Chemical mapping of a 177-nucleotide RNA with 2A3 and DMS. Source: RMDB library OK1LIB, as collected in RNAgym. The 2A3 profile rests on 401 reads.
RNA sequence: GGGAACGACUCGAGUAGAGUCGAAAACUGCAGUGAGAGGUGUUUCUGUCACUGCACUGCAGCCUGGGUGACAGAGGGAGACCCCCAUCUCUAAAACAAAUAAAUACAUAUGUACACAAAUGAAAAGAAUGGUACCCUAGUUCGCUAGGGUACCAUUAAAAGAAACAACAACAACAAC
Reactivity to 2A3 in 0.01 (KOAc 150mM, MgCl2 10mM, bicine 150mM(pH8.5), 24C), signal-to-noise 1, nucleotides 027 to 126: c000u000g040c000a000g000u000g000a100g000a180g140g020u060g100u040u110u210c090u050g200u120c000a000c020u000g010c000a000c000u000g000c000a030g000c000c030u000g000g000g090u170g060a000c030a020g000a100g000g040g030a100g000a090c000c000c000c000c000a140u000c020u000c080u200a160a100a050a000c080a000a230a020u120a000a060a020u170a090c030a120u210a000u140g100u230a020c020a000c000a000a190a000u240g060a050a210a020a000g070
Reactivity to DMS in 0.01 (KOAc 150mM, MgCl2 10mM, bicine 150mM(pH8.5), 24C), signal-to-noise 1, nucleotides 027 to 126: c040u040g050c000a010g000u000g000a190g000a130g060g000u010g000u050u000u040c240u010g000u000c000a020c000u050g030c000a000c020u050g000c120a000g000c000c040u010g020g000g000u000g000a040c060a180g000a020g000g000g010a050g000a140c030c000c040c000c020a110u040c000u000c030u090a120a160a120a050c180a040a100a090u030a130a130a000u010a030c150a110u000a020u000g000u000a040c180a030c060a040a040a100u010g010a090a150a000a070g000
The reactions ran in a buffer of 150 mM KOAc, 10 mM MgCl2 and 150 mM bicine (pH 8.5), at 24 C. For 2A3 the reverse transcriptase was SuperScript II with manganese.